[RMDB]
RNA sequence: GGGAACGACUCGAGUAGAGUCGAAAAAAAAAGAGCGUUAUCGCGUCAUUGAGUGACGUGAAGAUCAUCCAAGUGUGCUGUCUACAGUCGUAGAUAGCGCACAAUACGCUGAUGAUCAUUCAAAAAACCUAUAGCGUCAGUUCGCUGACGCUAUAGGAAAAGAAACAACAACAACAAC
Reactivity to 2A3 in 0.01 (KOAc 150mM, MgCl2 10mM, bicine 150mM(pH8.5), 24C), signal-to-noise 3, nucleotides 027 to 126: a000a000a000a000a000g110a030g010c060g060u210u090a080u040c010g000c000g020u000c000a010u090u260g250a120g230u050g020a010c000g000u000g040a040a020g000a020u000c000a000u000c030c040a140a150g010u000g000u000g030c010u000g000u000c000u000a050c110a290g160u300c160g010u100a000g000a010u010a000g000c010g020c000a010c000a010a000u050a030c010g000c060u020g000a010u000g000a000u000c020a050u120u070c070a080a090a030a010a020a040
Reactivity to DMS in 0.01 (KOAc 150mM, MgCl2 10mM, bicine 150mM(pH8.5), 24C), signal-to-noise 2, nucleotides 027 to 126: a040a030a020a030a050g010a000g010c030g000u000u000a080u000c020g000c000g000u000c000a040u000u000g020a130g030u000g030a000c000g060u000g010a060a140g010a000u010c000a010u000c000c140a120a090g000u000g010u010g000c000u000g020u000c000u000a000c000a150g010u030c180g010u000a000g000a000u000a010g000c000g020c000a000c010a070a020u020a140c070g010c110u010g010a000u000g000a010u000c020a210u010u000c070a010a030a040a020a050a090